[RMDB]
RNA sequence: GGGAACGACUCGAGUAGAGUCGAAAAUUCGGUCCUAUGCAAUAUGAACCCAUGAACCAUGUCAGGUCCUGACGGAAGCAGCAUUAAGUGGAUCCUCAUAUGUGCCGUAGGGUAGCCGAGAUUUAGCUGUCGACUUCGGUAACGUUUAUGAUAUGCGGGUGACAGAGGUGUUCGCACCUCUGUCACCAAAAGAAACAACAACAACAAC
Reactivity to 2A3 in 0.01 (KOAc 150mM, MgCl2 10mM, bicine 150mM(pH8.5), 24C), signal-to-noise 1, nucleotides 027 to 156: u040u000c010g010g180u300c000c000u010a010u120g000c000a000a040u000a010u030g010a070a070c000c000c010a010u020g000a000a010c070c020a010u010g010u090c000a000g060g000u000c030c010u120g150a060c080g000g000a010a010g000c000a000g030c000a010u020u020a050a000g000u030g010g000a020u050c040c000u000c040a090u060a020u120g230u080g190c120c100g000u000a010g030g030g000u040a040g000c000c010g000a000g040a000u070u030u150a010g000c060u050g000u040c020g050a140c120u030u010c050g100g010u070a150a000c030g000u000u070u190a150u040g120a120u000a120u170g130c160g000
Structure probing data (2A3) for a 207-nucleotide construct. The reactions ran in a buffer of 150 mM KOAc, 10 mM MgCl2 and 150 mM bicine (pH 8.5), at 24 C. The 2A3 profile rests on 442 reads.